[RMDB]
Chemical mapping of a 177-nucleotide RNA with DMS. Source: RMDB library OK2TST, as collected in RNAgym. The DMS profile rests on 705 reads. Reactivities are given for positions 27 through 126. For DMS the reverse transcriptase was MarathonRT. The reactions ran in a buffer of 150 mM KOAc, 10 mM MgCl2 and 150 mM bicine (pH 8.5), at 24 C.

RNA sequence: GGGAACGACUCGAGUAGAGUCGAAAACAAGAAAUCAAACGACCAUCGUAGGGCAGGUAGAUCAAUCACGUAUUCUCCCGCUCGCAAGCUCUCGUCGUAUAGGACGAGAUCCGUGAAGAUCCACAAAUCUGCUGGAACUAUUCGUAGUUCCAGCAGAAAAAGAAACAACAACAACAAC
Reactivity to DMS in 0.01 (KOAc 150mM, MgCl2 10mM, bicine 150mM(pH8.5), 24C), signal-to-noise 1, nucleotides 027 to 126: c100a160a090g010a040a080a100u000c100a080a120a080c030g000a090c070c100a080u000c120g010u000a170g060g010g050c060a010g000g000u000a000g000a040u000c040a060a120u000c060a090c090g020u010a070u000u040c160u000c010c010c030g000c060u020c170g000c070a130a110g010c150u010c010u000c020g000u000c000g030u000a140u020a120g000g000a000c000g040a010g010a020u000c020c110g000u000g000a070a090g000a010u000c080c080a050c100a000a040a170